Source information
Source: RMDB library 15KLIB, as collected in RNAgym. The record gives the reactivity of an RNA of 170 nucleotides to 2A3 and DMS.
RNA sequence: GGGAACGACUCGAGUAGAGUCGAAAAGUUCUCGAGGGCCUUCCUUCGUCGGUGAUCCUGCCUCUCCCUGUCGGUGAAUCCUCCCCUGAGAGGCCUCUUCCUAGGCCCGGAGUCUAUCUCCAUCUGGUGCUCCUUCACUUCGGUGAAGGAAAAAGAAACAACAACAACAAC
Reactivity to 2A3 in 0.01 (KOAc 150mM, MgCl2 10mM, bicine 150mM(pH8.5), 24C), signal-to-noise 9, nucleotides 027 to 129: g010u030u010c010u000c020g000a110g000g010g020c000c000u030u030c030c000u040u060c030g110u020c010g030g060u090g000a100u060c010c020u040g030c010c000u020c000u020c010c010c020u060g090u090c070g030g040u090g100a050a060u070c010c010u020c000c010c000c000u030g030a060g010a020g050g010c000c000u030c010u030u020c000c010u020a010g000g020c000c000c000g000g000a010g000u010c020u080a120u040c020u000c020c010a070u030c070u090g070g000u080g060c030
Reactivity to DMS in 0.01 (KOAc 150mM, MgCl2 10mM, bicine 150mM(pH8.5), 24C), signal-to-noise 6, nucleotides 027 to 129: g030u000u000c030u030c000g010a100g010g020g030c080c030u010u000c040c060u000u000c100g000u030c080g020g010u030g000a140u000c050c030u050g030c050c000u000c040u020c010c030c020u040g020u020c050g020g000u000g020a150a140u000c030c030u000c000c000c040c000u030g030a050g020a080g000g000c040c020u020c040u010u010c040c050u000a030g030g010c030c020c040g010g030a000g000u000c030u000a230u040c030u000c000c020a120u030c070u020g020g000u040g020c090
Annotation: The RNA was probed in 150 mM KOAc, 10 mM MgCl2 and 150 mM bicine (pH 8.5) at 24 C. For 2A3 the reverse transcriptase was SuperScript II with manganese.